Structure probing data (2A3 and DMS) for a 177-nucleotide construct. The RNA was probed in 150 mM KOAc, 10 mM MgCl2 and 150 mM bicine (pH 8.5) at 24 C. For 2A3, 2,418 sequencing reads were counted. DMS adducts were read by reverse transcription with MarathonRT.
RNA sequence: GGGAACGACUCGAGUAGAGUCGAAAAGAUAUGGACGUGGGUAGACGCACGACUAGCUCGGAAACGAGCACAGUCGUGAACUACGUCAAACCACGUCCUAAGUCAAACGGUUACUUCGGUAACCGAAGACGUAGUCAAGCUUCGGCUUGACUACGUCAAAAGAAACAACAACAACAAC
Reactivity to 2A3 in 0.01 (KOAc 150mM, MgCl2 10mM, bicine 150mM(pH8.5), 24C), signal-to-noise 1, nucleotides 027 to 126: g060a020u070a060u130g010g000a010c000g010u010g020g040g020u050a010g000a020c000g000c040a000c010g000a010c010u010a050g010c000u000c000g040g010a090a060a030c030g000a020g040c060a010c080a050g010u000c010g020u000g010a000a010c060u170a000c000g030u020c000a020a260a020c010c000a010c010g000u000c010c000u000a010a000g000u020c000a000a060a060c020g030g000u000u030a010c000u030u080c300g120g000u010a010a000c010c010g010a050a030
Reactivity to DMS in 0.01 (KOAc 150mM, MgCl2 10mM, bicine 150mM(pH8.5), 24C), signal-to-noise 1, nucleotides 027 to 126: g010a090u000a300u010g000g000a010c000g030u000g000g000g000u000a300g010a040c000g010c020a000c000g000a000c000u000a130g000c000u000c000g000g000a110a100a140c000g010a000g040c000a060c190a010g010u000c000g020u000g000a040a140c140u000a300c020g000u000c000a040a220a300c010c000a000c000g000u000c010c000u010a000a100g060u000c000a110a080a220c000g010g000u000u000a000c020u000u000c070g010g030u000a000a010c000c000g000a000a080